[RMDB]
RNA sequence: GGGAACGACUCGAGUAGAGUCGAAAAGAUAUGGAUCGCUACCCACCGUCAUAAAGCGAAGAACGCAUAGACGGUCGGAAACGACCGUCUAUGCGGGAGCUUGAAAUGACGAGGCGAUCCUAAGUCACAUUCGGACUAUGUUCGCAUAGUCCGAAUGAAAAGAAACAACAACAACAAC
Reactivity to DMS in 0.01 (KOAc 150mM, MgCl2 10mM, bicine 150mM(pH8.5), 24C), signal-to-noise 1, nucleotides 027 to 126: g000a100u010a230u010g000g000a000u000c000g030c020u000a140c040c030c000a300c170c000g000u010c000a030u000a140a040a030g000c000g010a190a270g010a250a150c030g030c010a000u020a000g010a020c030g010g040u000c000g000g020a120a110a250c000g020a030c020c020g040u000c020u000a000u000g000c010g000g000g000a110g060c000u000u020g000a040a190a030u000g000a000c000g010a060g000g010c000g010a000u000c010c010u000a030a020g000u000c170a160